The data come from the RNA Mapping Database (RMDB), library M2RFPK. This 207-nucleotide RNA was probed chemically with DMS and 2A3. The 2A3 profile rests on 8,878 reads.
[RMDB]
RNA sequence: GGGAACGACUCGAGUAGAGUCGAAAAGUCUUUAAGCAGAUGGCAGGUUCACCCCGUACGGUGCGGAAGUUCGCGCUUCCGUGAAACGCGAAAAUCGGACGGUGGCUGCAAGUCGCAUCGCAAAACCUAUAGCUUGUUAGGUUCGCCUAACAAGCAACAUUUAAUAUCUGUUCGCAGAUAUUAAAUGAAAAGAAACAACAACAACAAC
Reactivity to DMS in 0.01 (KOAc 150mM, MgCl2 10mM, bicine 150mM(pH8.5), 24C), signal-to-noise 3, nucleotides 027 to 156: g000u010c020u000u010u010a070a120g030c060a120g010a060u000g010g020c080a100g030g010u000u000c070a100c010c000c010c040g020u000a020c010g020g040u010g010c030g010g000a070a080g040u000u010c200g010c230g020c010u000u000c010c070g010u010g000a020a050a040c070g000c040g000a070a080a110a090u000c030g000g000a050c040g020g010u000g010g020c050u030g010c040a050a080g030u020c060g010c030a100u010c030g000c050a080a080a040a120c050c040u000a140u020a200g010c000u000u000g010u000u000a010g000g020u010u010c300g030c010c000u000a000a020c010a010a010g010c010a020a030
Reactivity to 2A3 in 0.01 (KOAc 150mM, MgCl2 10mM, bicine 150mM(pH8.5), 24C), signal-to-noise 6, nucleotides 027 to 156: g000u040c050u050u190u100a090a020g010c050a050g010a060u050g060g010c020a020g050g030u130u130c010a020c000c000c000c000g010u020a010c030g010g050u070g020c010g000g020a020a020g010u100u280c090g010c020g000c100u010u000c010c000g000u020g060a100a090a010c120g000c020g100a060a020a010a080u100c000g010g010a020c060g010g060u070g040g010c040u030g000c030a030a040g060u060c030g000c040a030u030c020g010c030a020a050a060a110c020c020u120a080u070a220g000c000u000u000g000u000u000a000g000g000u020u050c160g090c030c000u000a010a000c010a000a000g000c000a000a000
For 2A3 the reverse transcriptase was SuperScript II with manganese. For DMS, 6,163 sequencing reads were counted. Reactivities are given for positions 27 through 156.